An RNA of 207 nucleotides, treated with 2A3 and read out base by base.
The data come from the RNA Mapping Database (RMDB), library ARCHII.
2A3 adducts were read by reverse transcription with SuperScript II with manganese.

RNA sequence: GGGAACGACUCGAGUAGAGUCGAAAAUUAAUAGCUACCUCUGGUUGGCUGUUGAGCUAAGACUACACCAGAGCAUCCCACCGUUCGGGAGAAUGAGCGGUUCCCGUCUGAGGGUCAGAAAGACUAAGCCUGUGAAUGAGCGGUAGGUCAAUACCCAGUAGGUACAAGGGUUCGCCCUUGUACCUACAAAAGAAACAACAACAACAAC
Reactivity to 2A3 in 0.01 (KOAc 150mM, MgCl2 10mM, bicine 150mM(pH8.5), 24C), signal-to-noise 2, nucleotides 027 to 156: u060u020a100a040u040a100g010c020u070a010c040c040u030c080u130g020g020u070u030g090g100c040u000g100u130u130g060a030g020c040u010a080a000g080a190c050u140a030c080a000c010c020a010g010a000g040c030a100u030c020c000c000a050c000c000g020u010u010c030g040g030g010a160g070a170a080u220g000a020g000c020g000g000u000u030c010c020c020g070u020c070u020g050a070g000g000g090u180c130a070g050a090a080a030g000a000c030u020a100a070g040c000c030u120g000u080g100a220a250u050g010a050g080c080g000g020u080a030g040g000u020c020a100a050u100a100c000c000c000a000